[RMDB]
Overview: Source: RMDB library M2RFPK, as collected in RNAgym. Chemical mapping of a 207-nucleotide RNA with 2A3. For 2A3 the reverse transcriptase was SuperScript II with manganese. Values cover nucleotides 27 to 156. The RNA was probed in 150 mM KOAc, 10 mM MgCl2 and 150 mM bicine (pH 8.5) at 24 C. For 2A3, 551 sequencing reads were counted.

RNA sequence: GGGAACGACUCGAGUAGAGUCGAAAAUUACACGGAGAGCAUUUAGCCUGAUUACUCUUUAAAUCAAAUCAGGCAAUAGAGAGAAACUCGAGAGGUGAAAACCCCACAGCAUUCUGAAAUGUAUUUGAAGGCAACGCUACCUUCGGGUAGCGUUGAAUCAUGUUUCAACGUUCGCGUUGAAACAUGAAAAAGAAACAACAACAACAAC
Reactivity to 2A3 in 0.01 (KOAc 150mM, MgCl2 10mM, bicine 150mM(pH8.5), 24C), signal-to-noise 1, nucleotides 027 to 156: u110u040a050c050a090c140g220g000a030g000a010g070c080a060u000u060u060a030g030c000c020u000g010a010u050u050a010c020u020c070u210u300u120a040a060a020u250c100a000a020a000u000c000a000g010g000c000a000a000u000a000g020a000g000a010g000a140a050a000c020u060c030g090a140g000a000g020g020u020g000a010a090a010a010c000c000c030c000a040c000a030g050c030a050u060u040c010u100g070a120a100a060u100g060u000a200u060u060u150g050a050a010g020g000c000a000a000c000g010c000u000a010c010c020u000u050c040g080g000g000u000a020g010c000g000u000u000g000a000a000